[RMDB]
This 207-nucleotide RNA was probed chemically with DMS and 2A3.
Values cover nucleotides 27 to 156.
It was measured as part of the RMDB library M2RFPK.

RNA sequence: GGGAACGACUCGAGUAGAGUCGAAAAUACCGUCUUCUCCCCGACGGUUUCAAUCCAUAGCUUCACGUUGUGUAGCGUAGGUGGAAGGUAUCGUGUGGUGUAUAAACACCGCAUAGUCUCUUAGGGGUCAAGCUGAUAAACUUCGGUUUAUCAGCAACAACCGACAUAUAUUCGUAUAUGUCGGUUGAAAAGAAACAACAACAACAAC
Reactivity to DMS in 0.01 (KOAc 150mM, MgCl2 10mM, bicine 150mM(pH8.5), 24C), signal-to-noise 4, nucleotides 027 to 156: u000a060c000c010g020u000c010u010u010c040u000c010c000c030c040g020a050c020g010g000u000u000u010c060a080a130u000c020c020a090u000a170g010c030u000u000c010a040c010g030u000u000g040u000g020u000a030g020c010g010u000a050g040g030u000g010g030a080a130g010g010u000a070u000c070g030u000g010u010g000g040u000g010u000a170u010a160a130a120c000a010c000c010g000c000a020u000a050g020u000c040u000c020u000u000a280g030g020g020g010u000c050a070a210g010c010u020g010a020u000a000a010a000c000u000u010c300g040g010u000u000u000a000u000c000a000g040c010a010a050
Reactivity to 2A3 in 0.01 (KOAc 150mM, MgCl2 10mM, bicine 150mM(pH8.5), 24C), signal-to-noise 8, nucleotides 027 to 156: u070a000c000c000g020u020c020u210u040c040u090c010c000c000c010g000a000c000g010g000u010u030u050c040a030a040u000c010c000a040u050a100g010c010u040u050c010a020c070g300u300u260g010u100g020u060a010g010c030g070u080a070g010g120u030g020g010a040a020g090g030u120a060u170c070g000u010g000u000g000g030u010g040u020a090u120a280a240a010c000a000c000c000g000c000a000u020a030g030u000c010u000c000u100u220a030g000g010g010g000u040c070a080a040g000c000u000g000a000u000a000a000a000c010u030u050c100g010g000u000u000u000a000u000c000a000g000c000a000a000
The 2A3 profile rests on 12,420 reads. The RNA was probed in 150 mM KOAc, 10 mM MgCl2 and 150 mM bicine (pH 8.5) at 24 C.